[RMDB]
The record gives the reactivity of an RNA of 177 nucleotides to 2A3 and DMS.
The reactions ran in a buffer of 150 mM KOAc, 10 mM MgCl2 and 150 mM bicine (pH 8.5), at 24 C.
For 2A3 the reverse transcriptase was SuperScript II with manganese.
RNA sequence: GGGAACGACUCGAGUAGAGUCGAAAAGAACGCCAAGAGGCGAGACCGAGACCGAAAAUCACGCUACCUCGGAAAAGUGGAAUAGCGUCAGGAGUCCACUUUCGGAAAAGCCGAAAGAACGGCAGAACGCCAUUUUAGGAUUCGUCCUAAAAUGGCGAAAAGAAACAACAACAACAAC
Reactivity to 2A3 in 0.01 (KOAc 150mM, MgCl2 10mM, bicine 150mM(pH8.5), 24C), signal-to-noise 3, nucleotides 027 to 126: g030a030a020c000g020c000c060a070a130g090a170g130g010c000g000a000g030a030c010c000g010a100g020a020c040c070g050a010a030a000a110u140c060a000c000g030c000u020a040c000c000u110c070g090g060a080a050a030a070g110u090g010g050a120a180u020a060g020c000g010u010c020a110g010g090a040g060u000c000c000a000c000u010u030u000c000g020g000a170a140a040a000g120c010c010g010a040a040a010g050a090a030c030g000g010c010a010g040a060a000
Reactivity to DMS in 0.01 (KOAc 150mM, MgCl2 10mM, bicine 150mM(pH8.5), 24C), signal-to-noise 3, nucleotides 027 to 126: g000a060a050c020g040c010c010a160a150g060a190g000g000c020g000a040g010a260c020c040g000a150g030a110c050c030g000a000a060a130a110u030c120a040c060g000c020u020a110c090c020u000c000g000g030a040a080a040a130g020u020g000g000a050a060u000a050g020c030g020u000c190a070g000g010a180g010u000c000c020a150c060u000u000u000c000g030g000a120a000a160a120g000c000c010g020a060a060a040g020a040a100c100g010g020c060a070g010a120a110
It was measured as part of the RMDB library OK1LIB.